[RMDB]
An RNA of 177 nucleotides, treated with DMS and 2A3 and read out base by base. Reactivities are rounded to 0.1 and cut off at 0 and 3. 2A3 adducts were read by reverse transcription with SuperScript II with manganese. The DMS profile rests on 1,093 reads.
RNA sequence: GGGAACGACUCGAGUAGAGUCGAAAACCGUUGCCGUUCGCGGCAACGGGAAGCAAGCAAGCAGCGCAACGAGACAAGACGAUAAUGAGAUCGCGCUUGCUGAAAAGCCACGCUUCGGCGUGGCUAACUUUACUGCGCCAUUCGUGGCGCAGUAAAGAAAAGAAACAACAACAACAAC
Reactivity to DMS in 0.01 (KOAc 150mM, MgCl2 10mM, bicine 150mM(pH8.5), 24C), signal-to-noise 2, nucleotides 027 to 126: c000c000g010u000u000g010c000c020g050u000u010c220g090c030g000g000c000a000a030c000g040g000g010a030a090g020c070a090a060g000c010a020a030g030c030a100g050c070g050c120a100a040c060g020a150g040a230c130a120a050g000a150c100g000a060u000a120a030u020g000a110g010a140u000c000g000c060g000c010u000u010g010c010u000g000a060a060a060a060g000c000c000a010c000g010c010u000u010c150g010g000c000g050u000g000g000c020u000a000a010
Reactivity to 2A3 in 0.01 (KOAc 150mM, MgCl2 10mM, bicine 150mM(pH8.5), 24C), signal-to-noise 1, nucleotides 027 to 126: c000c000g000u000u000g010c050c030g030u020u040c250g010c000g130g040c000a000a000c030g000g020g040a030a000g050c040a020a000g000c000a050a000g020c090a080g040c000g000c060a010a190c040g090a010g080a150c090a150a040g100a090c080g060a080u140a260a160u300g110a070g040a200u030c010g000c010g000c020u000u010g000c000u020g020a040a070a000a010g000c000c000a000c000g000c010u020u040c090g110g000c000g010u000g000g030c010u000a000a000